[RMDB]
RNA sequence: GGGAACGACUCGAGUAGAGUCGAAAAAGCGAUGAUACGUCAUCGCAACGAUUGCCUGAUCGUAAAACAGGAGACGGCCGUGGCCGCGACCACGUAAAAAAGCGUAACGUGGUAUACGGACCACGAAAAAAGCGCGGAACGUUCGCGUUCCGCGCAAGUUGGUAGUAAGCUUCGGCUUACUACCAACAAAAGAAACAACAACAACAAC
Reactivity to 2A3 in 0.01 (KOAc 150mM, MgCl2 10mM, bicine 150mM(pH8.5), 24C), signal-to-noise 1, nucleotides 027 to 156: a000g010c030g000a000u010g020a010u030a050c200g090u030c000a000u010c000g000c010a000a010c000g030a010u000u050g010c010c020u010g000a010u000c020g110u210a030a030a000a030c010a010g000g050a010g070a030c160g110g050c170c010g010u010g000g030c030c000g010c030g010a000c000c010a000c010g010u010a140a090a020a050a030a000g150c020g030u030a130a010c000g000u000g010g040u010a090u090a090c020g000g010a140c010c000a010c030g030a040a010a000a000a010a000g000c000g000c010g020g000a000a000c020g050u180u190c180g030c020g090u000u030c000c000g060c000g000c000a000a000
Source: RMDB library M2RFPK, as collected in RNAgym. This 207-nucleotide RNA was probed chemically with 2A3. For 2A3 the reverse transcriptase was SuperScript II with manganese. Reactivities are given for positions 27 through 156. The RNA was probed in 150 mM KOAc, 10 mM MgCl2 and 150 mM bicine (pH 8.5) at 24 C.